[RMDB]
Notes: This 207-nucleotide RNA was probed chemically with DMS and 2A3. Values cover nucleotides 27 to 156. The reactions ran in a buffer of 150 mM KOAc, 10 mM MgCl2 and 150 mM bicine (pH 8.5), at 24 C. The DMS profile rests on 9,227 reads. The 2A3 profile rests on 9,909 reads.
RNA sequence: GGGAACGACUCGAGUAGAGUCGAAAAGGGGUCAAAGCGGCACCUUGGAUUUAUUCUUGAGGCACACUGAAGCCUCCACGGUGUGCUACCCACCAAGAAUUGUCAGGUGCCGAGCUUUGACGGAGGCACCCAAAAGCGUAGGUUUCGACCUACGCAAACAUAAGGUACAGUUCGCUGUACCUUAUGUAAAAGAAACAACAACAACAAC
Reactivity to DMS in 0.01 (KOAc 150mM, MgCl2 10mM, bicine 150mM(pH8.5), 24C), signal-to-noise 4, nucleotides 027 to 156: g030g000g010g010u000c000a030a020a030g020c010g000g030c000a000c010c020u000u010g050g010a050u000u010u000a020u010u010c010u000u000g010a230g020g010c010a040c020a060c030u000g010a080a110g030c020c010u000c010c010a300c020g010g010u000g030u000g010c020u000a040c030c020c030a300c050c000a040a030g000a040a030u000u000g000u000c030a090g000g020u000g000c000c000g000a030g030c010u000u000u000g010a050c040g030g020a070g040g000c010a130c000c000c010a090a050a130a210g030c000g030u000a010g010g000u000u000u000c290g020a100c000c000u000a000c000g040c000a020a030
Reactivity to 2A3 in 0.01 (KOAc 150mM, MgCl2 10mM, bicine 150mM(pH8.5), 24C), signal-to-noise 4, nucleotides 027 to 156: g000g010g020g000u010c020a000a000a000g020c020g010g000c010a010c030c020u120u200g110g010a060u170u300u210a020u080u000c000u000u010g000a000g010g010c010a000c000a000c010u020g020a050a010g010c010c000u010c000c000a010c000g000g000u000g000u000g010c000u010a040c040c050c020a040c010c000a000a010g000a000a010u020u030g030u050c160a130g030g010u000g000c000c000g000a000g000c000u000u000u000g000a000c000g000g000a000g000g000c010a050c010c000c000a030a130a030a040g000c000g000u010a010g010g030u060u110u140c250g090a050c000c000u000a000c000g000c000a010a020